[RMDB]
RNA sequence: GGGAACGACUCGAGUAGAGUCGAAAAACCAGUGAGCAGCCGCUCCGUUCACUCCUCCUCGUCUUUGGGAGGAUGCUGAGCGUCGUUUAGAAGACUUGCUGAUGCAGUUGAGCCUCAGGGCUGCAUCGGGACUUUAACUGCGGAUAUGCUCGCCAUCGGAUACGCAUUACUUCGGUAAUGCGUAUCCAAAAGAAACAACAACAACAAC
Reactivity to 2A3 in 0.01 (KOAc 150mM, MgCl2 10mM, bicine 150mM(pH8.5), 24C), signal-to-noise 1, nucleotides 027 to 156: a010c010c000a010g050u000g000a000g020c030a050g120c020c240g000c020u050c040c000g000u000u000c010a010c000u000c000c000u000c000c010u060c050g050u070c090u010u070u050g000g000g000a010g010g000a010u010g000c120u000g000a000g010c020g030u080c060g020u100u080u060a030g010a050a010g000a000c020u200u300g000c000u070g000a000u000g000c010a000g000u010u030g020a020g060c000c020u020c020a030g000g020g010c010u000g000c010a000u010c010g000g000g000a000c010u240u050u140a100a030c000u030g000c000g010g000a010u060a050u080g020c040u030c100g040c090c010a100u150c240